An RNA of 177 nucleotides, treated with DMS and 2A3 and read out base by base.
For 2A3 the reverse transcriptase was SuperScript II with manganese.
The data come from the RNA Mapping Database (RMDB), library OK2TRN.
Values cover nucleotides 27 to 126.
For 2A3, 10,434 sequencing reads were counted.
Conditions: 150 mM KOAc, 10 mM MgCl2 and 150 mM bicine (pH 8.5), 24 C.
RNA sequence: GGGAACGACUCGAGUAGAGUCGAAAAUGACAGGGUGGUCUCACAGACAUGAGCAGCUAGUCUCCCCUUCAGAGUUCCUCACAUAGGAAGGAACAGACAAACAUAAGAUGGGUACAGGGUUGCUGGCCAGUAUUUAAUGGUUCGCCAUUAAAUACUGAAAAGAAACAACAACAACAAC
Reactivity to DMS in 0.01 (KOAc 150mM, MgCl2 10mM, bicine 150mM(pH8.5), 24C), signal-to-noise 9, nucleotides 027 to 126: u010g010a090c080a090g010g010g020u010g010g000u000c020u000c060a060c110a110g010a090c140a130u000g010a080g010c040a290g010c020u000a120g010u000c030u000c070c010c010c070u010u000c090a090g000a140g000u000u000c000c010u010c070a140c190a140u010a110g020g010a120a020g000g010a030a020c020a070g010a080c160a060a070a070c140a070u010a060a070g000a140u000g000g000g010u000a060c100a060g000g000g000u000u000g010c020u000g000g000c180
Reactivity to 2A3 in 0.01 (KOAc 150mM, MgCl2 10mM, bicine 150mM(pH8.5), 24C), signal-to-noise 6, nucleotides 027 to 126: u160g030a030c030a050g150g020g040u070g020g050u060c020u020c050a070c020a040g140a040c040a100u110g040a020g040c030a000g010c030u030a040g030u040c020u010c040c010c010c000u030u050c040a070g020a020g120u000u010c010c000u080c000a060c020a130u260a050g130g060a120a010g000g000a040a020c010a010g040a010c060a020a160a000c020a060u170a140a030g060a070u100g030g030g020u070a050c030a060g090g000g060u080u090g030c020u010g000g040c000